[RMDB]
RNA sequence: GGGAACGACUCGAGUAGAGUCGAAAAAAGCCUAUCAGGAAGCUAUGGACUCUGGUGACACCUCACCACAAGUUCUUAAGGCUUUGCAGAAGGCUGUUAAUAUAGCUAAAAACGCCUAUGAGAAGGACUAAAUCAAUUUCUUCGGAAAUUGAUUUAGAAAAGAAACAACAACAACAAC
Reactivity to 2A3 in 0.01 (KOAc 150mM, MgCl2 10mM, bicine 150mM(pH8.5), 24C), signal-to-noise 1, nucleotides 027 to 126: a020a000g170c140c000u160a300u080c020a070g000g070a000a040g000c010u080a080u190g010g010a030c020u000c010u000g010g000u010g020a020c040a050c080c070u030c000a010c000c000a010c000a070a000g000u050u000c000u040u080a230a050g010g030c000u000u000u070g040c000a000g010a060a010g010g000c010u010g000u000u020a060a040u180a000u060a040g000c020u080a010a110a070a000a000c080g030c000c010u070a100u150g080a090g030a060a040g010g000a010
Reactivity to DMS in 0.01 (KOAc 150mM, MgCl2 10mM, bicine 150mM(pH8.5), 24C), signal-to-noise 3, nucleotides 027 to 126: a100a020g020c000c000u000a210u000c040a120g000g010a030a010g010c010u000a130u000g020g000a020c000u000c300u000g000g010u000g030a070c230a090c300c300u010c010a010c000c010a010c280a060a050g000u000u000c000u000u020a090a130g010g000c010u000u000u010g000c080a070g000a060a030g020g010c010u010g000u000u000a090a070u010a100u000a080g000c090u010a040a090a070a120a060c200g020c020c000u010a070u010g020a160g010a090a060g000g000a230
This 177-nucleotide RNA was probed chemically with 2A3 and DMS. Values cover nucleotides 27 to 126. For DMS the reverse transcriptase was MarathonRT. For DMS, 2,064 sequencing reads were counted. The 2A3 profile rests on 1,219 reads. It was measured as part of the RMDB library 15KREP. Conditions: 150 mM KOAc, 10 mM MgCl2 and 150 mM bicine (pH 8.5), 24 C. High DMS reactivity at an A or C suggests that its Watson-Crick edge is free.